Source information: The data come from the RNA Mapping Database (RMDB), library RNAMAK. Chemical mapping of a 207-nucleotide RNA with DMS and 2A3. The DMS profile rests on 2,687 reads. DMS adducts were read by reverse transcription with MarathonRT. The 2A3 profile rests on 1,624 reads. The reactions ran in a buffer of 150 mM KOAc, 10 mM MgCl2 and 150 mM bicine (pH 8.5), at 24 C.
RNA sequence: GGGAACGACUCGAGUAGAGUCGAAAAGCCACCUUCGGGUGGCGAGCUGCGUACUACCGUAGCUAGUUCAAGGGAUAUCCACAUCCCAAAUAGGAUGUGGCCGAGUCCCUAAAGAACUUGGACCUACGGUAUCGCGAACAUGAGUAUUCGUACUCAAUUCCCUUUUUGAAUUCGUUCAAAAAGGGAAAAAAGAAACAACAACAACAAC
Reactivity to DMS in 0.01 (KOAc 150mM, MgCl2 10mM, bicine 150mM(pH8.5), 24C), signal-to-noise 1, nucleotides 027 to 156: g020c000c000a010c010c010u010u010c300g070g080g070u000g000g020c030g010a000g000c000u010g050c000g030u000a120c080u000a000c000c000g020u010a020g010c030u000a010g020u010u000c010a300a080g040g020g030a020u000a200u000c000c010a020c000a000u020c000c000c090a000a170a080u030a030g030g040a000u000g000u000g000g010c140c060g020a260g050u010c020c000c000u000a010a070a130g000a020a020c010u000u020g060g000a110c190c000u000a020c020g010g020u000a020u000c040g000c060g000a040a110c080a130u020g010a090g000u010a120u000u000c200g000u000a100c010u010c010a020a300
Reactivity to 2A3 in 0.01 (KOAc 150mM, MgCl2 10mM, bicine 150mM(pH8.5), 24C), signal-to-noise 2, nucleotides 027 to 156: g000c000c000a010c010c030u040u060c210g090g020g000u020g030g010c000g000a020g010c150u100g040c000g000u020a130c010u030a000c040c000g020u010a010g040c010u010a000g000u010u010c020a040a050g000g000g000a000u010a040u060c000c000a000c000a000u040c000c040c000a040a170a020u130a030g000g010a000u000g000u000g000g030c000c010g060a090g120u000c010c000c010u100a160a190a010g040a000a000c000u010u040g100g060a080c010c060u000a010c000g000g020u020a020u300c010g000c000g000a010a030c090a130u110g000a010g010u010a090u040u260c220g100u060a040c010u010c010a020a060